[RMDB]
RNA sequence: GGGAACGACUCGAGUAGAGUCGAAAAUCCAGUACGUUCGCGUACUGGAAAAGUCGCGGCUUGAGGGCGUGUACGGCAGCGCACACACAGGACCCUCAAGCCAAAGUCCGUACUUCGGUACGGACAAGUGGGAAUAUCGGUUCGCCGAUAUUCCCACAAAAGAAACAACAACAACAAC
Reactivity to 2A3 in 0.01 (KOAc 150mM, MgCl2 10mM, bicine 150mM(pH8.5), 24C), signal-to-noise 2, nucleotides 027 to 126: u020c010c020a000g000u000a000c000g000u000u060c210g010c000g120u000a000c010u010g000g050a020a020a000a000g110u070c060g000c070g160g020c000u030u000g010a010g000g000g010c020g000u020g010u010a030c010g020g020c040a100g110c060g000c050a010c000a010c000a010c020a120g140g140a300c000c000c000u000c000a000a000g000c010c000a010a000a000g000u000c000c000g000u010a000c010u020u060c200g090g020u000a000c000g000g000a000c000a010a000
Reactivity to DMS in 0.01 (KOAc 150mM, MgCl2 10mM, bicine 150mM(pH8.5), 24C), signal-to-noise 2, nucleotides 027 to 126: u000c000c010a010g000u000a000c000g020u000u020c210g000c010g000u020a000c000u000g010g000a020a030a080a130g010u000c080g020c300g000g000c000u010u010g000a010g000g020g030c080g000u010g010u000a040c020g000g020c190a110g000c020g010c010a000c000a030c030a110c190a170g000g010a190c020c000c000u000c000a010a010g000c000c010a000a020a060g010u000c000c000g000u000a000c000u000u030c150g000g020u000a000c020g020g000a000c000a000a030

This 177-nucleotide RNA was probed chemically with 2A3 and DMS. Conditions: 150 mM KOAc, 10 mM MgCl2 and 150 mM bicine (pH 8.5), 24 C. DMS adducts were read by reverse transcription with MarathonRT. For 2A3, 2,266 sequencing reads were counted.